[RMDB]
RNA sequence: GGGAACGACUCGAGUAGAGUCGAAAAAAAUUCGCUCCUGCUUAUGCUAAAGCUGCGUAAGUUCAGUUGAGCCUGAAUUUUAAGUGAUACUAUCUAGCUUAGAAUUUGGUCAUUUUUGAUAGUGUAGAUUGAAAUUUGACAAAUUUUAAUUGAAAUUCACUGUCGGUAAGUUCGCUUACCGACAGUGAAAAGAAACAACAACAACAAC
Reactivity to 2A3 in 0.01 (KOAc 150mM, MgCl2 10mM, bicine 150mM(pH8.5), 24C), signal-to-noise 1, nucleotides 027 to 156: a010a000a030u110u080c010g000c000u000c000c000u000g000c000u010u000a000u000g000c010u080a160a250a100g140c180u090g000c020g010u010a000a000g000u070u150c060a020g020u180u120g060a000g010c000c000u040g000a010a010u000u010u010u010a000a000g000u000g010a010u000a020c000u000a000u000c010u000a000g010c010u010u000a010g010a000a000u060u000u010g040g090u140c060a190u080u160u190u210u160g000a000u000a000g000u010g010u010a020g000a000u000u000g040a000a030a020u050u030u100g040a040c050a000a020a000u000u050u090u040a010a000u000u000g010a000a020a030u010u000